The record gives the reactivity of an RNA of 177 nucleotides to DMS and 2A3. Source: RMDB library OK1LIB, as collected in RNAgym. For DMS the reverse transcriptase was MarathonRT.

RNA sequence: GGGAACGACUCGAGUAGAGUCGAAAAGAAGAGAAGUGAGUAAACGCCUAUCCGGUAUAAGCACAGCCCGUCAAAAGGCGUGCGGCGAGGGCACCUGAAGCUGUGCUUAUAACUGGGCCGUCGAAGAAAAUCGUAAUAUGUUCGCAUAUUACGAUUUAAAAGAAACAACAACAACAAC
Reactivity to DMS in 0.01 (KOAc 150mM, MgCl2 10mM, bicine 150mM(pH8.5), 24C), signal-to-noise 9, nucleotides 027 to 126: g010a080a070g010a060g010a080a080g010u010g000a060g010u020a050a060a070c080g010c030c020u010a100u020c020c010g000g020u000a010u000a010a010g000c000a010c000a010g000c000c100c100g010u030c200a070a060a110a070g000g010c130g020u010g010c030g010g010c080g010a080g000g000g010c020a040c000c010u010g010a130a140g000c010u000g010u000g000c000u000u000a000u000a030a040c020u010g000g010g000c110c050g000u000c030g010a090a110g010a080
Reactivity to 2A3 in 0.01 (KOAc 150mM, MgCl2 10mM, bicine 150mM(pH8.5), 24C), signal-to-noise 9, nucleotides 027 to 126: g120a040a010g080a000g020a140a020g060u090g070a020g020u110a050a100a010c020g010c010c010u050a080u040c000c010g010g000u010a000u000a010a000g000c000a000c000a000g010c000c030c040g130u110c050a090a090a040a030g100g010c100g020u030g010c010g030g020c110g050a110g030g060g000c010a020c010c020u050g050a040a010g000c000u000g000u000g000c000u000u000a010u000a030a090c010u020g000g010g000c010c020g030u050c040g030a080a050g070a070